This 177-nucleotide RNA was probed chemically with 2A3 and DMS.
Values are in units of 0.01, from 0 to 300, in steps of 10.
For DMS the reverse transcriptase was MarathonRT.
For 2A3, 892 sequencing reads were counted.
For DMS, 1,400 sequencing reads were counted.
RNA sequence: GGGAACGACUCGAGUAGAGUCGAAAAGCUGAUGAUUCUGAUGUCGGGAAAAGUUCAAGGUUGGGCAUCUGGUGAAGGCCUCAGGCUGCUUUCACUCUGGGAGAGCCAGCUGUGCAGGGAUCAUAUACUCCCUAUGGGAUUUCGAUCCCAUAGGGAGAAAAGAAACAACAACAACAAC
Reactivity to 2A3 in 0.01 (KOAc 150mM, MgCl2 10mM, bicine 150mM(pH8.5), 24C), signal-to-noise 1, nucleotides 027 to 126: g070c060u080g070a030u040g010a030u050u080c030u080g060a040u050g080u130c060g000g000g180a030a150a040a020g000u110u060c050a100a000g020g020u050u040g040g000g000c060a090u040c040u040g010g060u010g010a030a010g020g050c000c010u070c030a070g170g000c050u070g000c000u020u030u020c030a040c020u100c100u130g020g000g020a140g030a050g070c060c020a010g020c020u040g000u070g140c060a020g000g040g000a010u010c010a000u130a000u090a120
Reactivity to DMS in 0.01 (KOAc 150mM, MgCl2 10mM, bicine 150mM(pH8.5), 24C), signal-to-noise 2, nucleotides 027 to 126: g030c050u000g000a060u000g000a130u000u000c040u000g000a110u000g010u000c100g000g020g020a070a100a090a080g000u000u010c080a130a070g010g010u010u020g020g040g010c020a110u010c020u010g020g010u010g000a040a030g030g000c030c040u010c120a100g020g000c120u000g010c010u000u000u000c030a030c040u010c150u000g000g010g000a100g010a140g010c050c020a040g010c040u000g000u010g010c070a050g010g000g000a070u000c050a070u010a100u000a150